[RMDB]
RNA sequence: GGGAACGACUCGAGUAGAGUCGAAAAGCCGUGAGGAGCUUCCUAAUCUUGAUGCUGAAUACAUAAUCCACCCUACUGAGUCUCAGUAGUUUGGUGGCAGUCUUAUACACUAUGGUAAGCCUGUAAUAGUGAUGCAUUGUUUCGACAAUGCAUCACUAAAAGAAACAACAACAACAAC
Reactivity to DMS in 0.01 (KOAc 150mM, MgCl2 10mM, bicine 150mM(pH8.5), 24C), signal-to-noise 2, nucleotides 027 to 126: g030c000c010g000u020g020a170g050g020a160g010c070u000u000c010c000u000a080a050u010c120u000u000g000a080u020g000c030u020g080a250a070u050a070c150a050u020a130a010u050c000c000a000c050c010c000u000a050c000u020g010a170g000u040c200u010c000a090g020u000a030g010u010u100u010g010g000u000g010g030c130a020g000u000c020u000u000a010u000a080c030a200c150u100a040u010g000g010u000a050a000g000c030c040u000g030u000a060a040u000
Reactivity to 2A3 in 0.01 (KOAc 150mM, MgCl2 10mM, bicine 150mM(pH8.5), 24C), signal-to-noise 2, nucleotides 027 to 126: g020c020c010g020u060g090a110g030g000a020g040c010u040u040c000c000u030a050a030u020c060u210u140g050a070u110g040c060u020g090a030a030u230a150c050a060u120a050a010u010c010c000a000c000c000c000u000a000c000u030g010a010g160u030c090u020c240a010g010u010a010g090u110u130u160g000g000u000g000g010c000a000g020u020c020u070u050a020u010a060c200a040c140u150a070u110g000g000u010a010a010g000c000c000u010g020u060a010a140u000

This 177-nucleotide RNA was probed chemically with DMS and 2A3. The RNA was probed in 150 mM KOAc, 10 mM MgCl2 and 150 mM bicine (pH 8.5) at 24 C. The 2A3 profile rests on 741 reads. For 2A3 the reverse transcriptase was SuperScript II with manganese. Values cover nucleotides 27 to 126.